[RMDB]
RNA sequence: GGGAACGACUCGAGUAGAGUCGAAAAUUGUCUGAUGCAGGACGAUUCACUCGGCUCCAGCGGAAUAUACUGCAUUAAAAAUCAGUGGGCACCAGCACAUGGGGAUGUCACGCUCUCCACAUGAUUGUGGGUGUCCUGCUUUCGAGCAGGACACCCAAAAAGAAACAACAACAACAAC
Reactivity to 2A3 in 0.01 (KOAc 150mM, MgCl2 10mM, bicine 150mM(pH8.5), 24C), signal-to-noise 2, nucleotides 027 to 126: u090u040g030u020c070u050g130a210u200g200c120a110g000g000a000c000g010a000u070u000c030a100c000u020c010g030g030c000u010c070c070a100g000c000g150g140a080a030u300a030u030a140c000u000g010c020a030u140u120a140a000a000a080a100u080c040a000g030u040g030g010g000c000a000c040c000a030g130c030a000c000a010u000g000g000g000g000a030u210g060u100c000a000c080g040c010u020c000u000c020c000a020c000a000u040g050a300u090u080g010
This 177-nucleotide RNA was probed chemically with 2A3.
Reactivities are given for positions 27 through 126.
2A3 adducts were read by reverse transcription with SuperScript II with manganese.
The reactions ran in a buffer of 150 mM KOAc, 10 mM MgCl2 and 150 mM bicine (pH 8.5), at 24 C.